[RMDB]
RNA sequence: GGGAACGACUCGAGUAGAGUCGAAAAUGAAAUGAACAUCAAAGAGAGGAUGGUAUGGAUCAAGCCAGACAAGAUUCAUCCGCUCCUAUGGGUUGGACCAAAUGGGAUAGUCAUUGAUCACCAGCACCAUGACACUUAGCUUCGGCUAAGUGUCAUGAAAAGAAACAACAACAACAAC
Reactivity to 2A3 in 0.01 (KOAc 150mM, MgCl2 10mM, bicine 150mM(pH8.5), 24C), signal-to-noise 1, nucleotides 027 to 126: u110g000a080a010a000u130g020a010a000c000a070u090c090a030a090a000g120a020g020a010g030g040a060u160g090g050u210a020u030g000g010a010u020c030a040a040g050c030c060a050g060a140c050a010a050g010a060u090u000c000a010u000c000c010g060c050u010c000c000u010a110u060g000g030g040u040u150g100g070a070c050c030a010a130a000u100g030g040g040a110u090a070g060u030c050a020u000u040g050a050u140c050a040c140c020a000g060c000a010c040
Reactivity to DMS in 0.01 (KOAc 150mM, MgCl2 10mM, bicine 150mM(pH8.5), 24C), signal-to-noise 2, nucleotides 027 to 126: u000g040a070a050a030u000g000a150a120c080a060u000c030a100a100a060g000a090g000a030g010g000a050u010g000g000u000a020u010g020g020a050u010c100a040a300g000c000c130a040g000a200c090a070a190g000a090u010u000c000a050u010c000c020g020c110u000c010c030u010a060u000g000g000g000u000u010g010g010a150c010c040a030a100a090u000g000g000g000a120u000a100g010u020c080a000u010u000g000a120u000c080a100c030c030a060g000c160a070c140